Structure probing data (DMS and 2A3) for a 207-nucleotide construct. Values cover nucleotides 27 to 156. Conditions: 150 mM KOAc, 10 mM MgCl2 and 150 mM bicine (pH 8.5), 24 C. It was measured as part of the RMDB library M2RFPK.
RNA sequence: GGGAACGACUCGAGUAGAGUCGAAAAGUUUACGCUCCAAGAUCGGUGGAUAGCAGCCCUAUCAAUAUCUAGGAGAACUGUGCUAUGUUUAGAAGAUUAGGUAGUCUCUAAACAGUACAAUUUACCUCAUACGUUAGGACGUUCGCGUCCUAACGAACCAAUAAACGAAGUUCGCUUCGUUUAUUGGAAAAGAAACAACAACAACAAC
Reactivity to DMS in 0.01 (KOAc 150mM, MgCl2 10mM, bicine 150mM(pH8.5), 24C), signal-to-noise 4, nucleotides 027 to 156: g020u010u000u020a080c080g010c030u000c010c020a090a160g020a050u010c100g020g060u020g010g010a080u000a070g020c070a190g000c110c090c010u000a100u000c050a090a130u000a100u000c060u000a100g000g020a300g010a030a050c020u000g020u000g010c010u000a090u000g020u000u000u000a010g010a080a080g030a030u010u010a110g030g030u000a140g010u000c010u000c000u000a010a000a010c000a030g010u000a000c060a030a040u000u000u000a120c020c010u010c080a080u010a120c010g020u000u010a010g010g000a000c010g010u010u000c300g020c000g040u000c000c010u000a000a010c000g000a010a090
Reactivity to 2A3 in 0.01 (KOAc 150mM, MgCl2 10mM, bicine 150mM(pH8.5), 24C), signal-to-noise 9, nucleotides 027 to 156: g010u040u070u120a080c080g010c010u000c010c010a030a020g010a040u070c130g110g190u110g090g030a040u030a040g040c070a030g020c040c010c000u030a040u040c030a060a060u040a020u160c020u040a050g010g010a020g020a050a040c070u050g000u020g020c020u090a090u300g010u010u000u000a070g010a300a020g000a050u050u040a040g090g110u100a020g030u020c000u000c000u000a000a000a000c000a010g010u040a010c040a020a020u050u050u120a070c010c020u090c050a090u080a170c010g000u000u000a000g000g000a000c000g010u030u040c220g010c000g080u000c000c000u000a000a000c000g000a000a000